[RMDB]
RNA sequence: GGGAACGACUCGAGUAGAGUCGAAAAAUUUGUCAUGAAAUGACUUGCAAGCUUGAGGCAAGGCUAGCUCAUUAUUUGGUUUUCUAAGUGCCAAUUCCUUGGGCGCAUAGUGUGGCAUUUGGUUUGCGGGAAACACUCUAUUCGUAGAGUGUUUCCCAAAAGAAACAACAACAACAAC
Reactivity to DMS in 0.01 (KOAc 150mM, MgCl2 10mM, bicine 150mM(pH8.5), 24C), signal-to-noise 1, nucleotides 027 to 126: a030u010u020u010g010u000c030a020u000g010a090a070a120u000g010a080c030u000u010g030c080a070a040g020c130u020u020g040a100g010g020c030a030a050g010g000c100u000a090g000c020u000c010a010u000u000a030u000u010u000g010g010u010u020u000u010c190u000a080a070g020u010g010c000c020a000a080u000u000c100c080u000u000g000g020g010c050g030c110a090u000a040g000u000g000u000g000g000c020a040u020u000u000g010g020u000u000u000g000c230